[RMDB]
RNA sequence: GGGAACGACUCGAGUAGAGUCGAAAACGCUGGGGGGAGUAAACCCUUAGUCGAAGAACAACUGAAGCGCGCACGGUUGGGAGACUAAUGUGCUUUAUCCCUGUGCUGAAGCGCGCACGGCAACCGAAAGGUGCGGAGCGACGAUUUCGAUCGUCAACUACCCUCAUGAAUUCGUUCAUGAGGGUAGAAAAGAAACAACAACAACAAC
Reactivity to 2A3 in 0.01 (KOAc 150mM, MgCl2 10mM, bicine 150mM(pH8.5), 24C), signal-to-noise 3, nucleotides 027 to 156: c050g000c210u220g030g010g000g000g090g000a060g050u090a030a110a050c000c000c000u000u000a000g010u000c020g070a160a030g020a020a000c010a000a000c010u060g020a120a000g020c020g010c000g000c010a000c030g010g000u010u020g000g010g010a030g010a000c000u010a030a050u110g050u080g090c080u100u110u180a300u300c020c000c010u060g040u060g040c020u040g030a120a030g000c000g020c000g010c020a000c000g040g000c030a030a030c010c020g070a110a060a030g010g010u070g020c020g030g040a080g090c050g000a000c000g000a000u050u130u080c170g040a030u000c000g000u010c030a010a010
Reactivity to DMS in 0.01 (KOAc 150mM, MgCl2 10mM, bicine 150mM(pH8.5), 24C), signal-to-noise 1, nucleotides 027 to 156: c070g000c050u010g030g050g020g030g090g020a220g010u000a040a040a110c020c000c080u000u000a000g000u000c040g000a120a120g000a130a180c010a060a060c040u030g000a070a130g000c000g020c000g040c040a300c000g000g070u000u010g030g040g010a070g000a040c010u000a040a060u000g010u000g040c040u010u010u000a090u040c010c030c010u000g010u040g050c010u020g020a050a080g010c040g040c030g000c000a040c000g000g020c030a130a110c010c010g000a050a130a110g030g060u000g000c000g030g020a090g040c020g020a010c010g000a060u000u000u000c140g000a070u000c010g000u000c000a080a250
Chemical mapping of a 207-nucleotide RNA with 2A3 and DMS. Values cover nucleotides 27 to 156. 2A3 adducts were read by reverse transcription with SuperScript II with manganese. The data come from the RNA Mapping Database (RMDB), library RNAMAK. High 2A3 reactivity points to a flexible backbone, as in loops and unpaired stretches. The RNA was probed in 150 mM KOAc, 10 mM MgCl2 and 150 mM bicine (pH 8.5) at 24 C.